RNA sequence: GGGAACGACUCGAGUAGAGUCGAAAACUCAGUGAAGAGAUGACCAAGAAAAGUCAUUUUGACACAAUUGGCUCUUCUGUUACUGGUUAUUCUUUCUCUCUUGCAGGUAUAGCUGACGGGUUCAGGAACUCUCAAUAAGCUUCGGCUUAUUGAGAGUAAAAGAAACAACAACAACAAC
Reactivity to DMS in 0.01 (KOAc 150mM, MgCl2 10mM, bicine 150mM(pH8.5), 24C), signal-to-noise 3, nucleotides 027 to 126: c020u010c020a060g010u020g020a040a040g000a040g000a000u010g000a170c000c010a020a040g020a050a080a150a060g010u040c000a120u020u010u030u010g010a110c100a050c180a060a160u010u000g000g000c030u000c000u050u000c000u000g000u030u030a040c110u000g000g000u000u010a050u030u020c040u010u010u010c060u000c000u000c040u000u010g010c020a020g000g000u020a060u040a040g020c030u000g000a080c090g030g000g000u030u010c020a030g000g020a140
Reactivity to 2A3 in 0.01 (KOAc 150mM, MgCl2 10mM, bicine 150mM(pH8.5), 24C), signal-to-noise 6, nucleotides 027 to 126: c050u050c020a020g000u020g070a050a040g010a000g010a050u050g060a140c010c000a040a020g090a060a140a020a020g010u010c040a060u080u080u240u300g070a020c020a010c040a090a140u010u020g010g000c010u010c010u170u040c020u070g160u080u110a050c030u020g010g040u030u040a120u100u030c020u020u060u010c020u000c000u000c030u020u070g020c050a030g010g060u100a070u130a180g080c020u010g020a050c040g130g010g010u060u040c030a040g040g030a040
Description:
Structure probing data (DMS and 2A3) for a 177-nucleotide construct. The RNA was probed in 150 mM KOAc, 10 mM MgCl2 and 150 mM bicine (pH 8.5) at 24 C. The DMS profile rests on 6,791 reads. Reactivities are given for positions 27 through 126.